[RMDB]
RNA sequence: GGGAACGACUCGAGUAGAGUCGAAAAGUCUCACGAGUGCACAGACAAAGGUAGUUGACUCCGGAGCUACCAGUACUCGAAGGAAUGCGAAAGAGUUCAUGUAUUCCAACCGGAGAAGAACUCAAAACAUGCUCCUCAUCUUCGGAUGAGGAGCAUGAAAAGAAACAACAACAACAAC
Reactivity to 2A3 in 0.01 (KOAc 150mM, MgCl2 10mM, bicine 150mM(pH8.5), 24C), signal-to-noise 2, nucleotides 027 to 126: g010u030c000u000c010a060c040g020a000g000u010g020c060a060c200a130g200a090c060a160a040a000g070g000u000a000g000u000u030g010a010c000u000c010c000g000g000a000g000c000u000a000c010c020a000g000u010a000c000u000c000g020a000a030g060g080a170a020u030g090c080g020a000a130a150g010a070g020u010u120c010a020u090g060u070a140u090u080c060c070a080a060c060c040g000g000a000g000a010a010g010a050a000c000u000c000a010a030a000a070
Reactivity to DMS in 0.01 (KOAc 150mM, MgCl2 10mM, bicine 150mM(pH8.5), 24C), signal-to-noise 1, nucleotides 027 to 126: g000u010c000u000c010a040c000g000a000g000u000g030c030a220c000a100g110a100c260a150a150a190g020g000u000a000g000u000u070g000a230c000u010c000c000g000g000a080g000c000u000a000c000c000a230g010u000a000c000u000c000g000a010a150g010g000a040a020u000g050c150g010a230a060a110g000a000g050u060u000c030a150u030g000u000a100u000u000c190c100a200a050c000c040g000g000a000g020a250a210g000a000a000c000u000c000a060a000a080a200